[RMDB]
RNA sequence: GGGAACGACUCGAGUAGAGUCGAAAAGACACGACGGAGACGUCGUGUCAAAGAGUGGGAAACCACUCAAAGAGCCACAGCUUCGGCUGUGGCUCAAGGCGCGGGACCUUCCGCGGAACAAAAGGAACAUUAGGAUGAUGUUCGCAUCAUCCUAAUGAAAAGAAACAACAACAACAAC
Reactivity to 2A3 in 0.01 (KOAc 150mM, MgCl2 10mM, bicine 150mM(pH8.5), 24C), signal-to-noise 2, nucleotides 027 to 126: g000a000c010a010c000g010a000c000g010g010a060g040a060c010g000u000c000g000u010g000u000c000a000a000a000g000a000g000u000g000g010g030a010a070a080c000c000a000c000u000c000a020a030a000g000a000g000c000c010a000c000a010g020c010u130u180c300g120g000c020u010g010u000g000g000c000u000c000a000a000g000g000c010g000c020g020g000g090a110c000c000u090u050c000c030g000c030g010g030a020a010c030a020a030a000a000g030g000a060a030
Reactivity to DMS in 0.01 (KOAc 150mM, MgCl2 10mM, bicine 150mM(pH8.5), 24C), signal-to-noise 2, nucleotides 027 to 126: g000a010c000a010c000g020a010c000g000g000a260g010a200c000g040u010c000g030u000g000u000c000a020a060a070g000a020g020u010g000g000g000a180a150a270c010c000a000c000u000c000a050a080a080g000a020g020c020c000a000c010a010g020c020u000u030c230g020g000c000u010g070u010g000g010c000u000c000a030a040g010g030c010g000c000g000g010g010a090c030c040u000u010c010c000g020c010g040g020a110a090c230a030a010a040a050g010g000a170a300